[RMDB]
Source: RMDB library OK2TST, as collected in RNAgym. Structure probing data (DMS) for a 177-nucleotide construct. Reactivities are given for positions 27 through 126.

RNA sequence: GGGAACGACUCGAGUAGAGUCGAAAAACAUUGGGUUUUAUGUGUGAUUGGGUAGGAAGUAAUCUCUAGCAACCUCAGGCCUUGUCCUUCUACCCUGAAGGCUGAGGGAUUGAUAGACAGGCAUAUCUAUACCAAAUGUCUUCGGACAUUUGGUAUAAAAAGAAACAACAACAACAAC
Reactivity to DMS in 0.01 (KOAc 150mM, MgCl2 10mM, bicine 150mM(pH8.5), 24C), signal-to-noise 5, nucleotides 027 to 126: a050c070a110u000u000g010g000g000u000u000u010u000a060u020g020u010g020u010g010a080u010u000g010g010g020u000a040g010g010a060a100g000u010a070a090u010c090u000c030u010a070g010c030a030a080c050c000u000c040a040g020g010c010c020u000u010g010u010c030c030u000u000c050u000a120c080c070c050u010g010a030a040g000g020c020u000g010a020g000g000g000a070u010u000g000a080u000a040g000a040c130a060g020g000c080a070u000a060u010c110